[RMDB]
Background: The record gives the reactivity of an RNA of 177 nucleotides to DMS and 2A3. The RNA was probed in 150 mM KOAc, 10 mM MgCl2 and 150 mM bicine (pH 8.5) at 24 C. Reactivities are given for positions 27 through 126. 2A3 is a SHAPE reagent: it acylates the 2'-hydroxyl of flexible nucleotides of all four kinds. 2A3 adducts were read by reverse transcription with SuperScript II with manganese.

RNA sequence: GGGAACGACUCGAGUAGAGUCGAAAAAGAAAUAAAGCGUACGAAGAUGGACGUACGCAACCAGUGCGUACAGGUAUCGCACAUCCAGCGCUCUAAGGAGAGCGCAAAACCAAAUAAUAGAAAAAAACACGUAUUGAUUGUUCGCAAUCAAUACGUGAAAAGAAACAACAACAACAAC
Reactivity to DMS in 0.01 (KOAc 150mM, MgCl2 10mM, bicine 150mM(pH8.5), 24C), signal-to-noise 1, nucleotides 027 to 126: a100g000a120a060a030u000a050a080a130g000c000g000u010a000c000g020a160a190g010a160u000g010g010a200c020g010u000a000c020g000c000a070a020c070c070a120g060u000g020c000g000u000a040c100a180g000g000u000a030u000c000g000c000a030c010a190u000c160c060a150g010c000g020c000u000c000u020a080a200g050g020a100g000a010g020c000g010c010a010a030a050a020c140c030a020a020a050u000a020a090u000a170g040a000a000a010a110a140a020a080
Reactivity to 2A3 in 0.01 (KOAc 150mM, MgCl2 10mM, bicine 150mM(pH8.5), 24C), signal-to-noise 2, nucleotides 027 to 126: a000g010a000a070a000u190a050a060a030g010c010g000u000a000c000g040a050a070g150a180u230g040g040a040c010g010u000a010c000g000c000a000a000c030c030a020g000u000g000c030g010u050a080c090a180g140g100u130a080u220c010g000c010a010c000a000u000c020c020a060g000c000g000c000u000c000u050a140a200g210g060a060g230a000g000c010g000c010a010a000a000a000c060c000a100a050a010u290a120a050u180a170g150a040a110a000a000a000a000a000